[RMDB]
Chemical mapping of a 207-nucleotide RNA with 2A3 and DMS. Reactivities are rounded to 0.1 and cut off at 0 and 3.
RNA sequence: GGGAACGACUCGAGUAGAGUCGAAAAACCUUUGUGCUUAUGGAGAAUAUAGAGAUGAGGGAGAACCCAUUGGGUUCUCCUCCCCACCAUUGGAUAUUCGUUGAAAUAAGCACUCUGGUAAAACGUCGUACUGAACGUUCGCGUUCAGUACGACGAACUUAUGCAUAACGUUCGCGUUAUGCAUAAGAAAAGAAACAACAACAACAAC
Reactivity to 2A3 in 0.01 (KOAc 150mM, MgCl2 10mM, bicine 150mM(pH8.5), 24C), signal-to-noise 5, nucleotides 027 to 156: a000c010c000u020u010u010g000u000g000c000u000u000a000u010g020g010a030g010a030a010u040a020u040a070g150a050g020a210u060g020a090g000g020g000a010g000a000a010c020c020c120a300u160u300g010g000g000u010u020c000u000c010c000u020c020c000c000c000a060c030c010a080u070u150g140g030a010u020a010u020u020c010g150u130u050g000a010a030a010u000a000a000g000c000a000c000u000c000u000g000g020u070a070a080a030a050c010g000u000c000g000u000a000c010u000g000a010a000c000g020u050u070c300g000c000g080u000u000c000a000g000u000a000c000g000a000c000g000a000a000
Reactivity to DMS in 0.01 (KOAc 150mM, MgCl2 10mM, bicine 150mM(pH8.5), 24C), signal-to-noise 2, nucleotides 027 to 156: a050c000c000u010u000u000g010u000g020c020u000u000a030u010g010g010a260g000a040a020u010a020u000a240g010a160g000a030u000g010a120g030g010g000a040g010a020a040c000c010c030a300u000u000g070g020g040u000u000c000u000c010c020u000c000c030c030c010a090c010c010a160u000u000g020g020a040u000a020u000u000c030g010u010u020g000a180a140a060u000a000a010g000c000a010c010u000c020u000g060g000u010a030a040a050a080c010g020u000c010g060u000a030c000u040g010a030a000c010g030u000u000c300g040c060g000u000u020c010a000g000u000a000c000g020a000c010g010a000a040
The RNA was probed in 150 mM KOAc, 10 mM MgCl2 and 150 mM bicine (pH 8.5) at 24 C.
The 2A3 profile rests on 6,544 reads.